[RMDB]
RNA sequence: GGGAACGACUCGAGUAGAGUCGAAAAGGAUCCUAAGUACUCUUGGUAACUGCCACGAGAUCAGUUACCAGUGAGGAGUACUCUAUUUGUCAAUGAUCUCGUGGUUGACGGAUAGAGAUUAGGAUCGCUACUGCUAUGUAUUCGUACAUAGCAGUAGAAAAGAAACAACAACAACAAC
Reactivity to 2A3 in 0.01 (KOAc 150mM, MgCl2 10mM, bicine 150mM(pH8.5), 24C), signal-to-noise 5, nucleotides 027 to 126: g020g000a000u000c000c000u000a010a010g040u040a130c010u010c000u020u020g040g010u060a050a030c010u010g020c010c010a050c040g040a030g000a060u040c000a000g040u020u020a000c000c000a010g010u020g010a010g020g030a040g050u080a050c000u000c010u030a040u010u030u030g010u000c020a010a020u020g010a040u020c020u010c040g020u010g010g000u000u020g020a030c030g020g010a020u030a020g010a000g000a000u000u010a000g000g000a000u000c000g000
Reactivity to DMS in 0.01 (KOAc 150mM, MgCl2 10mM, bicine 150mM(pH8.5), 24C), signal-to-noise 9, nucleotides 027 to 126: g000g000a010u000c000c000u000a010a030g010u000a120c000u000c000u000u000g010g010u010a080a070c020u000g000c050c020a060c040g000a040g000a060u000c010a010g010u000u000a050c070c070a020g010u000g010a020g010g000a220g020u010a160c010u000c010u010a030u000u000u010g010u000c080a080a070u000g010a050u000c030u000c060g010u000g010g010u000u000g000a060c050g010g010a080u000a010g010a010g010a140u000u000a010g010g010a010u000c000g000

Chemical mapping of a 177-nucleotide RNA with 2A3 and DMS. The DMS profile rests on 26,277 reads. Conditions: 150 mM KOAc, 10 mM MgCl2 and 150 mM bicine (pH 8.5), 24 C. For 2A3 the reverse transcriptase was SuperScript II with manganese. For 2A3, 24,367 sequencing reads were counted. DMS adducts were read by reverse transcription with MarathonRT. DMS (dimethyl sulfate) methylates the pairing face of unpaired adenines and cytosines.